[RMDB]
Structure probing data (DMS and 2A3) for a 177-nucleotide construct.
In probing experiments dimethyl sulfate is read out at A N1 and C N3, which are open when not base-paired.
The DMS profile rests on 6,841 reads.
DMS adducts were read by reverse transcription with MarathonRT.
Source: RMDB library OK1LIB, as collected in RNAgym.

RNA sequence: GGGAACGACUCGAGUAGAGUCGAAAAUAGACUAGCCGUAGUGGCGAAGAACGACCUGAUAGGGUGCCGCAGAGACCCACUAUUAGGCUAGUAUAAAAAUCUCUGCGGUAUAUAGACAGAAAAUUAAAUGAUAUUAGCAUUUCGAUGCUAAUAUCAUAAAAGAAACAACAACAACAAC
Reactivity to DMS in 0.01 (KOAc 150mM, MgCl2 10mM, bicine 150mM(pH8.5), 24C), signal-to-noise 4, nucleotides 027 to 126: u050a080g020a050c000u000a010g020c000c010g000u000a010g000u000g010g020c300g000a150a110g020a100a130c150g010a100c020c020u010g000a160u030a090g000g010g010u010g000c010c000g010c030a000g000a010g010a060c300c000c000a020c000u000a010u040u030a140g010g010c000u000a000g010u010a000u000a000a020a010a040a020u000c000u000c000u000g000c010g000g010u010a010u010a050u050a120g000a180c130a130g010a100a060a050a070u040u030a040a080
Reactivity to 2A3 in 0.01 (KOAc 150mM, MgCl2 10mM, bicine 150mM(pH8.5), 24C), signal-to-noise 3, nucleotides 027 to 126: u160a010g160a010c000u000a000g000c000c010g000u020a010g000u020g040g020c040g020a100a020g070a070a060c190g080a070c010c020u060g050a150u180a160g090g030g030u040g010c000c000g000c000a000g000a020g010a010c000c000c010a010c010u000a020u040u150a030g000g000c000u010a010g000u000a000u020a010a000a000a000a000u000c000u000c000u000g000c020g000g020u000a010u040a000u020a000g090a000c080a050g200a030a110a020a020u230u160a080a200